[RMDB]
The record gives the reactivity of an RNA of 177 nucleotides to 2A3 and DMS. The reactions ran in a buffer of 150 mM KOAc, 10 mM MgCl2 and 150 mM bicine (pH 8.5), at 24 C. The data come from the RNA Mapping Database (RMDB), library OK2TST. For DMS, 1,393 sequencing reads were counted.
RNA sequence: GGGAACGACUCGAGUAGAGUCGAAAAGAGCACUUAAAGCUGCAGUCAGGAUUGCCACUGUAUAUACAUGGGCAUUCGGUUCCGAUGAUCAAAGUUGGGAUGAAGCAUGUAUUUUAGCAAAUCAGAGCAGUACUUCCGAGUUCGCUCGGAAGUACUGAAAAGAAACAACAACAACAAC
Reactivity to 2A3 in 0.01 (KOAc 150mM, MgCl2 10mM, bicine 150mM(pH8.5), 24C), signal-to-noise 1, nucleotides 027 to 126: g030a000g030c020a000c090u120u130a050a120a020g000c000u050g000c020a020g100u040c020a040g020g140a130u020u110g040c010c010a020c030u080g070u000a080u040a010u000a160c010a020u030g000g170g040c090a260u020u020c010g090g000u040u000c010c020g000a020u090g020a080u220c150a120a070a060g000u000u020g020g030g000a020u040g010a050a020g050c000a000u040g000u050a050u050u080u060u090a040g070c030a080a030a030u120c040a040g030a000g090
Reactivity to DMS in 0.01 (KOAc 150mM, MgCl2 10mM, bicine 150mM(pH8.5), 24C), signal-to-noise 2, nucleotides 027 to 126: g020a140g000c050a030c070u000u000a070a080a160g010c030u020g040c020a030g000u000c090a080g030g000a120u020u010g020c010c030a080c100u000g020u020a030u010a090u010a010c010a040u010g000g000g040c050a120u000u000c050g010g040u000u010c000c030g010a060u010g000a110u010c260a100a050a170g020u000u010g020g000g020a060u000g010a050a070g020c010a010u010g020u020a020u000u010u020u000a050g020c080a040a050a050u000c100a150g000a110g000
Reactivities are given for positions 27 through 126.